[RMDB]
This 207-nucleotide RNA was probed chemically with 2A3.
The data come from the RNA Mapping Database (RMDB), library OK3TST.
RNA sequence: GGGAACGACUCGAGUAGAGUCGAAAACUGUGUCUCAGGGCUGCCCUGGGCUAAGCAUAGUGGUUGGGGCCUGAUUACAUAGGAUCCAGGAGGAAGACAGCUUCUGUUAAAGGUAAGGGAGGAGGAAGACUGUCUAGAAAAAACAAUCAGGAAAGUAUCACGACGGUAGUUUCGACUACCGUCGUGAAAAAGAAACAACAACAACAAC
Reactivity to 2A3 in 0.01 (KOAc 150mM, MgCl2 10mM, bicine 150mM(pH8.5), 24C), signal-to-noise 2, nucleotides 027 to 156: c010u010g000u000g010u010c020u000c060a050g120g020g010c210u140g120c020c000c000u030g000g010g000c050u030a090a020g100c060a140u110a080g020u060g140g050u010u120g000g020g030g040c000c000u030g030a020u070u130a040c070a060u160a040g040g040a030u020c010c020a000g000g060a100g000g040a070a030g000a050c000a000g000c000u020u030c020u030g090u070u200a210a110a020g080g060u080a030a090g050g040g000a030g000g010a020g020g000a000a020g090a090c040u030g000u000c030u010a050g100a040a130a020a000a000a010c100a040a030u050c030a000g010g010a080a050a040g040u040a100